[RMDB]
RNA sequence: GGGAACGACUCGAGUAGAGUCGAAAAGCCACCAAACAGAAGCAAUGGGUUCAUGUUUGUGGUGAAGUACAAUCUGACCCAUACCCCCAACAGGCUCAGGCAAUGGAUUGCUUAGUAGAGCAAACCCGCAUGGGUGAUUAUUCGUAAUCACCCAUGCAAAAGAAACAACAACAACAAC
Reactivity to 2A3 in 0.01 (KOAc 150mM, MgCl2 10mM, bicine 150mM(pH8.5), 24C), signal-to-noise 1, nucleotides 027 to 126: g000c020c010a040c030c010a000a100a000c030a050g110a090a000g060c130a030a110u050g050g010g040u140u140c090a070u210g030u020u040u030g030u030g000g150u100g130a140a010g050u090a000c060a020a070u030c020u060g030a010c000c000c010a030u150a140c010c000c000c000c000a020a030c030a030g060g000c020u050c030a000g030g070c020a000a000u080g050g100a170u120u000g010c000u110u010a040g040u060a020g080a010g060c000a000a040a000c020c030c000
Reactivity to DMS in 0.01 (KOAc 150mM, MgCl2 10mM, bicine 150mM(pH8.5), 24C), signal-to-noise 2, nucleotides 027 to 126: g000c020c030a120c110c080a060a070a060c090a120g000a090a080g020c090a120a040u010g030g000g000u020u010c030a080u000g010u000u000u000g010u000g020g000u000g000a090a210g000u000a040c040a060a050u000c030u000g010a040c020c000c010a060u010a300c030c000c000c000c020a060a140c200a080g010g010c020u010c060a070g000g020c080a040a110u020g000g000a120u000u010g010c000u000u010a110g040u010a060g010a020g020c000a020a030a090c060c010c190
Conditions: 150 mM KOAc, 10 mM MgCl2 and 150 mM bicine (pH 8.5), 24 C. Chemical mapping of a 177-nucleotide RNA with 2A3 and DMS. The 2A3 profile rests on 1,327 reads. 2A3 adducts were read by reverse transcription with SuperScript II with manganese. For DMS the reverse transcriptase was MarathonRT. The data come from the RNA Mapping Database (RMDB), library OK2TRN.